[RMDB]
RNA sequence: GGGAACGACUCGAGUAGAGUCGAAAAAGCAGAUCAACUUGUCCAAGUCCAGGCAUGUGAAAGUGUUCGAAGGAGCAGAGCUCGAGCGGAAAUGAGGCUACUUUGUCAGCUUUAACACUUUGGUGUCAGUUAUCCAUGGCUUCGGCCAUGGAUAACUAAAAGAAACAACAACAACAAC
Reactivity to DMS in 0.01 (KOAc 150mM, MgCl2 10mM, bicine 150mM(pH8.5), 24C), signal-to-noise 1, nucleotides 027 to 126: a060g000c030a060g000a020u000c110a020a090c000u000u000g050u000c020c060a070a050g000u000c040c050a120g000g030c010a010u030g010u000g000a080a060a080g000u000g020u000u000c020g000a090a030g000g020a130g000c000a060g010a060g000c130u000c060g040a100g040c080g000g000a060a090a110u000g000a110g010g000c030u000a060c050u010u020u030g000u000c090a170g000c040u000u010u010a050a040c050a010c070u000u010u020g030g020u010g000u000c100
Structure probing data (DMS) for a 177-nucleotide construct.